[RMDB]
RNA sequence: GGGAACGACUCGAGUAGAGUCGAAAAGCAUUUAAAGUUGAAGAGAAGUUAGAUAAGUGGCUAGAUUUAGGCAAAGCAAAUCAAUUCAGGCUGCUUUGCGCGUCACUAAAGAACUGGGAUCAGCUUCUAAACAGGUAAGAUUCGUCUUACCUGUUUAAAAAGAAACAACAACAACAAC
Reactivity to 2A3 in 0.01 (KOAc 150mM, MgCl2 10mM, bicine 150mM(pH8.5), 24C), signal-to-noise 3, nucleotides 027 to 126: g020c010a040u040u090u300a110a080a000g010u020u030g060a100a030g040a030g010a150a000g020u010u070a020g010a230u050a120a020g020u020g030g000c020u050a060g050a300u160u140u290a050g050g000c000a010a010a010g000c010a020a060a100u160c020a040a050u290u120c060a050g080g000c020u010g000c000u010u010u000g000c020g010c010g010u000c010a000c010u020a020a030a040g080a040a020c040u020g030g000g020a040u030c020a010g000c000u110u010c030
Reactivity to DMS in 0.01 (KOAc 150mM, MgCl2 10mM, bicine 150mM(pH8.5), 24C), signal-to-noise 9, nucleotides 027 to 126: g020c120a080u010u010u000a100a050a040g020u000u000g010a050a070g010a300g010a120a030g000u000u000a040g010a070u000a110a040g010u000g000g000c010u010a120g000a160u010u010u020a090g010g010c010a010a010a010g010c010a010a050a090u010c070a070a150u020u010c250a090g010g010c120u000g010c000u000u000u000g000c010g020c180g010u000c010a020c010u010a050a090a110g000a010a010c020u000g010g010g000a220u000c010a020g010c010u000u000c170

An RNA of 177 nucleotides, treated with 2A3 and DMS and read out base by base. For 2A3 the reverse transcriptase was SuperScript II with manganese. The reactions ran in a buffer of 150 mM KOAc, 10 mM MgCl2 and 150 mM bicine (pH 8.5), at 24 C.